[RMDB]
RNA sequence: GGGAACGACUCGAGUAGAGUCGAAAACACUUCAACAUAUGUUGCAGUACUAUGAUGUAUCUAUCUACUGCUUUAGGUGACGUCCCUAGCUUCGCAAGACUUCACGACCUGUAUAACAGACCUAUAACAACCCAGAACUGUUCGCAGUUCUGGGUUGAAAAGAAACAACAACAACAAC
Reactivity to DMS in 0.01 (KOAc 150mM, MgCl2 10mM, bicine 150mM(pH8.5), 24C), signal-to-noise 1, nucleotides 027 to 126: c070a080c050u010u010c070a060a040c050a190u010a080u000g020u000u010g000c040a020g010u020a100c130u000a100u020g040a100u000g040u010a150u000c060u020a080u000c130u000a040c010u010g000c000u010u000u000a040g000g000u000g020a080c040g000u000c010c000c030u010a100g000c070u000u000c020g070c110a050a040g000a070c020u010u000c070a090c080g040a050c130c030u000g020u000a080u000a070a090c090a080g010a090c010c020u000a070u010a070a170
Reactivity to 2A3 in 0.01 (KOAc 150mM, MgCl2 10mM, bicine 150mM(pH8.5), 24C), signal-to-noise 1, nucleotides 027 to 126: c040a000c030u060u050c030a060a040c000a070u210a060u210g080u050u040g030c010a000g040u010a040c070u080a090u160g050a040u020g020u150a130u070c020u010a050u000c000u040a040c000u000g010c000u050u060u190a050g060g000u020g000a010c040g030u000c000c030c010u050a020g000c010u090u030c100g000c050a000a100g040a070c020u040u030c060a000c050g070a040c000c000u020g000u050a140u010a140a000c010a050g030a060c000c040u150a050u190a300a040

The data come from the RNA Mapping Database (RMDB), library OK2TST. Chemical mapping of a 177-nucleotide RNA with DMS and 2A3. For DMS the reverse transcriptase was MarathonRT. For 2A3 the reverse transcriptase was SuperScript II with manganese. Values cover nucleotides 27 to 126. For 2A3, 976 sequencing reads were counted. The RNA was probed in 150 mM KOAc, 10 mM MgCl2 and 150 mM bicine (pH 8.5) at 24 C.